[RMDB]
RNA sequence: GGGAACGACUCGAGUAGAGUCGAAAAGUACAUGCCGCCGCAUGCCCCUUCGCCGGGGCAGAUUGCCCGCUCGAUGGCAUCGACGUCGGCGCGACUCAUCAAACCGCGAGAGCACGCUCCGACCGCCUGACAAGAGCUCAUUCGUGAGCUCUUGUCAAAAAGAAACAACAACAACAAC
Reactivity to DMS in 0.01 (KOAc 150mM, MgCl2 10mM, bicine 150mM(pH8.5), 24C), signal-to-noise 3, nucleotides 027 to 126: g000u020a070c120a080u020g000c060c010g020c020c010g030c120a110u000g000c010c020c050c010u000u000c200g020c210c230g030g070g000g030c020a000g000a110u020u050g000c040c000c050g000c090u020c010g020a060u030g010g030c020a050u000c140g010a120c090g030u000c010g040g000c000g000c020g000a300c010u000c080a190u030c090a040a000a140c100c060g050c070g000a080g000a060g000c050a100c000g000c030u000c010c020g000a030c020c080g000c070c050
Reactivity to 2A3 in 0.01 (KOAc 150mM, MgCl2 10mM, bicine 150mM(pH8.5), 24C), signal-to-noise 4, nucleotides 027 to 126: g070u070a040c040a100u080g030c020c010g000c020c010g030c030a010u060g010c000c000c000c020u090u110c070g050c050c020g020g000g000g000c010a000g010a030u070u160g030c020c010c000g050c040u050c030g110a090u100g030g000c020a050u030c040g080a100c050g030u030c000g000g010c000g000c010g040a030c010u030c050a260u050c050a230a090a210c060c030g030c100g060a040g000a010g020c130a050c260g000c010u030c000c000g010a020c040c020g030c000c030
The data come from the RNA Mapping Database (RMDB), library OK1LIB. An RNA of 177 nucleotides, treated with DMS and 2A3 and read out base by base. The 2A3 profile rests on 2,799 reads.